This 177-nucleotide RNA was probed chemically with 2A3 and DMS. The reactions ran in a buffer of 150 mM KOAc, 10 mM MgCl2 and 150 mM bicine (pH 8.5), at 24 C. For DMS the reverse transcriptase was MarathonRT. Source: RMDB library OK2TST, as collected in RNAgym.
[RMDB]
RNA sequence: GGGAACGACUCGAGUAGAGUCGAAAAGGAGUUGGAGACGGUGGCGCGGAGGGAUCCUGCGAGCUUCUGGUUGAGUGCGUCGAACUGGCCUGCGGUGAGGACCGGGGAUCCGAAGGUGAGGAAGCCGCUCAUUAGAUCUGUUCGCAGAUCUAAUGAGAAAAGAAACAACAACAACAAC
Reactivity to 2A3 in 0.01 (KOAc 150mM, MgCl2 10mM, bicine 150mM(pH8.5), 24C), signal-to-noise 3, nucleotides 027 to 126: g080g000a070g020u120u070g080g020a080g000a050c060g010g070u030g010g010c040g030c040g040g020a030g000g060g010a030u060c010c010u110g100c060g020a030g050c030u090u040c050u070g090g020u100u100g080a040g040u100g020c070g050u090c040g030a050a030c040u020g050g000c000c020u050g030c030g070g000u070g020a060g000g030a020c050c000g000g040g000g010a030u030c030c020g030a080a020g050g020u060g040a050g010g040a040a040g030c020c020g000
Reactivity to DMS in 0.01 (KOAc 150mM, MgCl2 10mM, bicine 150mM(pH8.5), 24C), signal-to-noise 6, nucleotides 027 to 126: g000g010a120g010u000u000g020g000a110g000a100c120g010g020u000g000g010c070g020c090g010g010a080g020g000g000a060u000c040c020u000g020c050g010a110g010c040u000u010c040u010g020g010u000u010g010a090g020u010g010c090g000u010c080g000a070a090c060u000g000g000c020c030u000g010c050g020g000u000g000a170g010g000a080c080c050g000g010g000g000a100u000c030c030g000a070a080g000g010u010g010a110g000g010a100a110g010c060c090g000